[RMDB]
RNA sequence: GGGAACGACUCGAGUAGAGUCGAAAAGAUAUGGAGUGAGUACACGACAACAGCUACAGUCGGAAACGACUGUAGACAUGUCGGUACCACUCCUAAGUCAAAACCUGUGUUGUUCGCAACACAGGAACGAUCAAAGUAACUUCGGUUACUUUGAUCGAAAAGAAACAACAACAACAAC
Reactivity to DMS in 0.01 (KOAc 150mM, MgCl2 10mM, bicine 150mM(pH8.5), 24C), signal-to-noise 5, nucleotides 027 to 126: g020a040u010a300u000g000g000a020g010u000g000a160g020u000a000c010a160c020g020a020c010a060a130c260a250g010c010u000a000c000a010g000u010c000g000g000a120a080a190c000g000a020c000u000g010u000a000g000a030c080a140u000g020u000c000g010g000u000a000c000c000a000c000u000c000c010u020a010a060g000u000c020a100a090a120a170c010c000u010g010u000g000u000u000g000u000u000c280g000c010a010a010c000a000c000a000g010g010a030a030
Reactivity to 2A3 in 0.01 (KOAc 150mM, MgCl2 10mM, bicine 150mM(pH8.5), 24C), signal-to-noise 6, nucleotides 027 to 126: g030a010u060a050u170g000g010a010g000u010g020a110g030u030a020c300a040c130g020a010c020a220a030c050a150g040c000u000a010c000a010g000u010c010g010g050a060a060a030c010g000a010c010u010g000u000a000g000a000c000a030u060g010u010c000g000g000u000a000c000c000a000c000u000c000c000u010a020a000g000u010c020a000a040a130a210c000c000u000g010u000g010u000u010g050u050u080c300g010c170a010a000c000a000c000a010g000g010a000a020

Record summary:
Chemical mapping of a 177-nucleotide RNA with DMS and 2A3. Conditions: 150 mM KOAc, 10 mM MgCl2 and 150 mM bicine (pH 8.5), 24 C. High 2A3 reactivity points to a flexible backbone, as in loops and unpaired stretches. Source: RMDB library TTRDES, as collected in RNAgym.